An RNA of 177 nucleotides, treated with 2A3 and DMS and read out base by base. The data come from the RNA Mapping Database (RMDB), library OK1LIB. Reactivities are given for positions 27 through 126. Conditions: 150 mM KOAc, 10 mM MgCl2 and 150 mM bicine (pH 8.5), 24 C. The 2A3 profile rests on 1,224 reads.

RNA sequence: GGGAACGACUCGAGUAGAGUCGAAAAGACGCCUGUGUGGCGAAGCGAGCAUGAGAUGGAGCCGCAAGAGAAGAUGAGAUAGAAGCGGCUCGAUAGAUUGCUCGCCAAAAGAUCCAUCUCACAGAGACGACGGUCAUAUAUUCGUAUAUGACCGUCGAAAAGAAACAACAACAACAAC
Reactivity to 2A3 in 0.01 (KOAc 150mM, MgCl2 10mM, bicine 150mM(pH8.5), 24C), signal-to-noise 2, nucleotides 027 to 126: g120a010c000g030c050c010u110g040u000g060u100g140g000c000g000a050a000g000c000g000a000g020c000a000u000g000a030g040a130u030g070g000a020g030c000c000g010c000a060a040g020a030g040a230a070g120a130u300g150a000g020a070u140a110g120a120a000g000c000g000g000c010u000c000g020a000u020a020g050a000u040u000g000c000u020c010g000c000c000a010a000a000a000g040a050u020c000c010a070u010c010u020c040a230c060a000g010a040g020a050
Reactivity to DMS in 0.01 (KOAc 150mM, MgCl2 10mM, bicine 150mM(pH8.5), 24C), signal-to-noise 2, nucleotides 027 to 126: g000a080c050g010c000c000u000g000u020g020u120g030g040c020g000a060a040g020c030g000a000g030c110a000u020g060a300g000a130u020g000g010a000g020c000c030g000c000a140a080g000a140g020a140a160g030a130u030g000a220g000a220u050a140g000a250a210g030c000g000g010c000u040c010g000a050u000a080g000a120u020u000g000c030u030c000g020c000c210a010a020a020a020g020a140u030c020c000a090u000c000u000c000a090c050a080g000a050g010a150